[RMDB]
RNA sequence: GGGAACGACUCGAGUAGAGUCGAAAACUGAAUUAUCCACUAUUGAGCAGUACAUCUUAAUAGCAUACUGAUGACAAUUCGAACGUACGGAAACCAUCCUGCCAUCCGAAACGUACGAUGUACUACCAUCUCAGACAUUCCACGUACGGAAACCAUCUGACCUCUAGGUUUUCGAACCUAGAGGUCAAAAAGAAACAACAACAACAAC
Reactivity to 2A3 in 0.01 (KOAc 150mM, MgCl2 10mM, bicine 150mM(pH8.5), 24C), signal-to-noise 2, nucleotides 027 to 156: c010u040g010a070a050u070u040a070u140c030c020a030c050u030a030u060u040g000a010g040c110a050g060u070a020c010a050u080c060u080u100a080a030u040a110g030c020a050u070a130c070u100g130a100u120g060a080c080a060a230u050u030c040g030a070a050c040g020u070a000c030g010g020a110a060a020c010c010a010u060c000c020u040g020c000c010a050u080c030c020g050a110a040a020c030g010u020a000c010g060a070u030g000u010a010c000u020a050c030c040a120u010c080u090c070a030g010a040c020a070u020u050c050c010a010c060g050u060a000c050g010g000a040a000a030c030c000a020u120c040

About this RNA: The record gives the reactivity of an RNA of 207 nucleotides to 2A3. The 2A3 profile rests on 1,076 reads. The RNA was probed in 150 mM KOAc, 10 mM MgCl2 and 150 mM bicine (pH 8.5) at 24 C. The data come from the RNA Mapping Database (RMDB), library OK3TST. 2A3 adducts were read by reverse transcription with SuperScript II with manganese.